[RMDB]
RNA sequence: GGGAACGACUCGAGUAGAGUCGAAAAUUUGAUGUUUCCCAGCCAGGGGUUAUCGUCCUCAAGUUUCUUGAUUUUCUUCUUAACCUUCCGGAGGUCCCUCUCGAGUUCCUCUAACUUCUUUCUUCCAUUCACCCACUGCUCGAGGAUCUCUUCUCUGCUAUCAUGAGAUGUUCGCAUCUCAUGAUAGAAAAGAAACAACAACAACAAC
Reactivity to 2A3 in 0.01 (KOAc 150mM, MgCl2 10mM, bicine 150mM(pH8.5), 24C), signal-to-noise 2, nucleotides 027 to 156: u120u100u160g050a060u050g030u020u030u030c000c000c010a010g050c050c060a040g030g060g010g030u110u110a080u240c040g010u070c020c010u030c020a030a020g040u030u110u030c070u080u080g110a130u110u080u080u070c030u100u030c020u060u090a110a090c010c000u050u070c040c040g080g010a020g000g040u020c010c000c000u000c000u030c000g030a030g060u020u040c010c010u000c030u020a060a100c040u100u060c020u070u130u020c010u080u030c020c000a090u000u070c030a060c010c030c010a050c060u030g010c000u010c020g010a030g010g000a060u010c030u000c000u060u040c030u030c010u070g060